[RMDB]
RNA sequence: GGGAACGACUCGAGUAGAGUCGAAAACGCGCCAGAUCGAUCUUAUCACGAAUAUCAUUGGUGGCAACAUCGAGAUUUUUGUUCCAGUCAAAGGAGAUACUUACCACCGAUUGCCCUUCGCUACUGGCACGCAACCAGACUUCGGUCUGGUUGCGUGAAAAGAAACAACAACAACAAC
Reactivity to 2A3 in 0.01 (KOAc 150mM, MgCl2 10mM, bicine 150mM(pH8.5), 24C), signal-to-noise 1, nucleotides 027 to 126: c020g040c000g040c030c000a010g010a070u000c070g020a010u000c030u100u130a060u140c030a010c130g080a100a040u100a060u120c200a150u010u030g020g000u000g020g040c030a020a010c020a080u000c030g040a080g030a180u050u080u050u080u090g030u120u050c030c060a070g110u030c050a070a060a020g020g040a100g040a000u030a080c030u010u080a030c010c010a000c000c040g040a000u060u090g040c010c030c050u000u050c050g000c040u120a100c030u050g020g000
Reactivity to DMS in 0.01 (KOAc 150mM, MgCl2 10mM, bicine 150mM(pH8.5), 24C), signal-to-noise 1, nucleotides 027 to 126: c110g000c140g090c010c010a020g000a090u000c050g010a100u010c110u010u010a070u040c090a090c010g000a020a010u020a070u030c110a100u000u000g030g040u010g020g000c140a030a040c270a040u000c010g020a250g000a090u000u010u000u000u000g020u040u010c030c100a120g000u000c040a010a020a030g000g040a300g010a050u010a040c200u000u000a080c020c000a000c050c060g000a060u000u000g000c090c000c150u010u000c020g000c070u000a050c030u000g000g020
Record summary:
The record gives the reactivity of an RNA of 177 nucleotides to 2A3 and DMS. The 2A3 profile rests on 945 reads. Reactivities are given for positions 27 through 126. 2A3 adducts were read by reverse transcription with SuperScript II with manganese.